[RMDB]
RNA sequence: GGGAACGACUCGAGUAGAGUCGAAAACGCGUGAAAUAAUCAGAGGAAUCGUUUGAAAUCAUCGUAGUAAUCGCGCGAAAAUCGCGUGAAAUAAUCAGAGGAAUCGUUUGAAAUCAUCGUAGUAAUCGAGUGAGUAGACUUUCGAGUCUACUCACUCAAAAGAAACAACAACAACAAC
Reactivity to 2A3 in 0.01 (KOAc 150mM, MgCl2 10mM, bicine 150mM(pH8.5), 24C), signal-to-noise 2, nucleotides 027 to 126: c030g000c070g000u040g020a160a000a000u280a030a050u090c100a060g020a000g030g010a080a060u040c000g150u020u090u170g050a030a070a030u050c000a080u050c080g050u040a030g010u060a080a040u040c000g000c010g000c030g020a220a070a000a110u080c000g000c000g000u010g020a000a010a010u190a020a010u140c050a000g010a000g000g120a030a000u010c040g020u030u070u060g040a100a050a000u010c020a000u050c060g030u000a130g050u030a090a010u140c180
Reactivity to DMS in 0.01 (KOAc 150mM, MgCl2 10mM, bicine 150mM(pH8.5), 24C), signal-to-noise 1, nucleotides 027 to 126: c160g000c030g000u060g010a050a050a080u000a170a210u000c000a010g000a020g040g000a080a090u000c020g000u000u010u050g000a060a150a090u070c070a030u000c160g000u060a100g000u010a100a270u010c010g080c000g010c000g000a020a090a280a120u020c000g000c000g000u020g000a010a020a170u000a060a050u030c030a060g000a030g000g030a000a030u000c000g000u010u000u000g000a000a100a070u000c050a030u050c010g010u000a030g030u010a080a150u140c180